[RMDB]
RNA sequence: GGGAACGACUCGAGUAGAGUCGAAAAAGGGAGACUCUGGCAUCGAUCAGGGCUCGUGCUCCAGCGGAGACACCAAAGGUGCGCGCUUCGGUGGCAGUCAGUCCGCUCAGGCUGCGGAAGCGGCAGCGAUCAGGUAUGGCUUCGGCCAUACCUGAUCAAAAGAAACAACAACAACAAC
Reactivity to DMS in 0.01 (KOAc 150mM, MgCl2 10mM, bicine 150mM(pH8.5), 24C), signal-to-noise 2, nucleotides 027 to 126: a100g070g030g010a030g020a110c010u030c000u000g000g000c030a120u010c240g000a120u000c040a010g000g000g000c050u000c030g000u020g040c000u000c010c010a050g000c200g000g000a120g010a110c140a110c000c110a060a300a100g000g050u020g000c040g010c070g010c010u000u000c020g000g020u000g000g020c020a010g000u010c150a080g000u000c040c000g040c070u010c030a130g040g040c000u000g000c000g010g000a060a100g010c040g000g000c000a090g020c080
Reactivity to 2A3 in 0.01 (KOAc 150mM, MgCl2 10mM, bicine 150mM(pH8.5), 24C), signal-to-noise 3, nucleotides 027 to 126: a010g150g030g020a080g040a060c010u020c010u030g040g040c000a130u080c130g050a100u120c150a090g040g080g030c090u050c040g040u050g020c020u020c040c020a060g010c040g030g040a110g070a180c060a040c060c020a020a110a050g100g010u050g020c090g000c000g010c010u080u040c050g090g010u060g050g050c000a000g000u060c010a000g030u020c040c010g020c040u030c040a040g090g000c000u000g020c020g050g050a070a000g060c040g030g000c000a020g040c030

Conditions: 150 mM KOAc, 10 mM MgCl2 and 150 mM bicine (pH 8.5), 24 C. This 177-nucleotide RNA was probed chemically with DMS and 2A3. 2A3 adducts were read by reverse transcription with SuperScript II with manganese. The 2A3 profile rests on 2,903 reads. For DMS, 2,611 sequencing reads were counted.